[RMDB]
RNA sequence: GGGAACGACUCGAGUAGAGUCGAAAAUUAUAUAGCGUGUGCAAGACGCUGAACUUGCCAUGAUCUGGAACUUUAGUGCUGACGUCCGAGUUCCAGAUCAUCAUUUCGGACCUCAGCACUAAUAUAACAUAAUAUCAGACUUCGGUCUGAUAUUAUGAAAAGAAACAACAACAACAAC
Reactivity to 2A3 in 0.01 (KOAc 150mM, MgCl2 10mM, bicine 150mM(pH8.5), 24C), signal-to-noise 5, nucleotides 027 to 126: u150u040a090u020a040u110a160g040c020g020u030g110u140g020c010a010a010g010a030c060g050c300u060g020a070a040c010u010u020g010c010c010a020u040g040a110u040c030u060g070g060a050a070c020u030u040u030a030g000u020g020c020u010g020a010c020g010u000c000c010g010a000g030u070u060c020c000a000g010a010u020c000a000u000c010a010u020u120u030c000g010g000a010c000c020u000c010a000g000c000a010c000u010a020a040u110a020u040a100a010
Reactivity to DMS in 0.01 (KOAc 150mM, MgCl2 10mM, bicine 150mM(pH8.5), 24C), signal-to-noise 7, nucleotides 027 to 126: u010u010a080u000a150u010a070g010c030g020u000g000u000g000c040a030a040g010a100c050g020c140u000g000a080a080c040u000u000g000c020c060a030u000g000a100u010c040u000g010g010a100a120c200u000u000u000a020g010u000g010c010u000g010a030c260g010u000c010c010g000a030g000u010u000c060c050a090g000a050u000c100a040u010c100a080u000u010u010c010g010g010a020c010c070u000c010a010g000c000a010c010u000a010a010u010a080u000a060a210
An RNA of 177 nucleotides, treated with 2A3 and DMS and read out base by base. Conditions: 150 mM KOAc, 10 mM MgCl2 and 150 mM bicine (pH 8.5), 24 C. It was measured as part of the RMDB library M2PK90.